Source: RMDB library OK3TST, as collected in RNAgym. The record gives the reactivity of an RNA of 207 nucleotides to 2A3 and DMS.

[RMDB]
RNA sequence: GGGAACGACUCGAGUAGAGUCGAAAAUGAAAUGACAGAUGCUAUCUAUUCAGUUAUUGAACAAGGUAAGGCAUUAUCCUUUAGAGAUGCUGAUGUGCCAGUUGUAGACAAUGGUACCAUUUCUACUGCUGAUUGGUCUGAACCCAUUCUGCUUGAACAAGAUAGUGACGUUCGCGUCACUAUCUUGAAAAGAAACAACAACAACAAC
Reactivity to 2A3 in 0.01 (KOAc 150mM, MgCl2 10mM, bicine 150mM(pH8.5), 24C), signal-to-noise 4, nucleotides 027 to 156: u150g020a000a000a060u090g010a030c020a030g030a060u060g100c020u050a040u090c020u070a080u060u040c020a010g060u100u280a120u120u090g050a090a110c090a120a020g030g050u110a060a060g100g000c060a050u040u120a070u110c000c010u010u030u120a090g010a000g000a030u030g000c040u020g020a090u040g020u010g050c020c000a010g000u020u000g030u000a010g010a040c120a100a070u020g080g030u110a180c070c000a020u000u040u000c000u010a010c000u000g050c010u020g020a120u090u020g060g020u020c010u040g070a080a070c000c020c010a000u070u030c060u060g110c060u060u080g040a120a060
Reactivity to DMS in 0.01 (KOAc 150mM, MgCl2 10mM, bicine 150mM(pH8.5), 24C), signal-to-noise 2, nucleotides 027 to 156: u000g010a070a050a070u000g030a090c020a150g020a070u010g000c010u000a070u000c020u000a100u000u000c010a050g000u000u000a160u020u000g000a030a090c060a030a070g070g020u000a030a220g030g000c020a070u000u010a080u000c040c070u000u010u000a120g030a180g020a050u000g010c070u010g020a100u000g010u000g010c030c010a050g010u000u000g000u000a080g020a080c120a040a050u000g020g000u010a060c070c000a130u000u000u000c000u000a050c040u000g000c040u000g000a060u000u000g010g010u000c050u020g020a140a180c180c010c010a170u000u000c060u030g000c070u000u000g020a110a180

2A3 adducts were read by reverse transcription with SuperScript II with manganese. For DMS the reverse transcriptase was MarathonRT. As a SHAPE reagent, 2A3 marks flexible, mostly unpaired nucleotides at the ribose 2'-OH.